The record gives the reactivity of an RNA of 177 nucleotides to 2A3 and DMS.
Conditions: 150 mM KOAc, 10 mM MgCl2 and 150 mM bicine (pH 8.5), 24 C.
2A3 adducts were read by reverse transcription with SuperScript II with manganese.

RNA sequence: GGGAACGACUCGAGUAGAGUCGAAAAAGGAUGUCCACAUUGACACAGGUCCGAGGCUCUGUCAGAUGGGUGAGUCUCCCAAGAGGACAUUUGCAUCUUUCAGGUUGCACAACACAAAAAAAGCGGACUUCACAAUAACAUUCGUGUUAUUGUGAAGAAAAGAAACAACAACAACAAC
Reactivity to 2A3 in 0.01 (KOAc 150mM, MgCl2 10mM, bicine 150mM(pH8.5), 24C), signal-to-noise 9, nucleotides 027 to 126: a010g120g010a040u030g020u000c010c010a060c030a090u030u130g030a020c020a010c020a090g050g050u050c020c020g030a100g070g000c010u010c010u050g070u070c020a040g040a210u090g040g010g060u080g030a050g060u010c040u010c040c010c010a030a020g050a040g020g020a010c010a020u040u030u080g020c010a020u010c020u040u280u100c070a080g130g070u120u040g010c030a030c020a090a050c030a020c090a050a100a040a020a020a020a020g070c040g010g020a020
Reactivity to DMS in 0.01 (KOAc 150mM, MgCl2 10mM, bicine 150mM(pH8.5), 24C), signal-to-noise 5, nucleotides 027 to 126: a050g000g000a020u010g000u010c010c020a090c070a110u010u000g000a070c220a030c070a050g000g020u010c030c030g010a110g010g020c030u000c080u000g000u000c040a100g000a070u020g010g000g000u020g000a160g010u000c060u020c010c030c030a090a110g010a100g000g010a050c030a030u000u000u010g010c030a030u000c020u000u030u030c110a070g000g000u010u020g000c050a050c120a070a100c070a040c130a000a000a070a070a040a080a090g020c030g010g000a200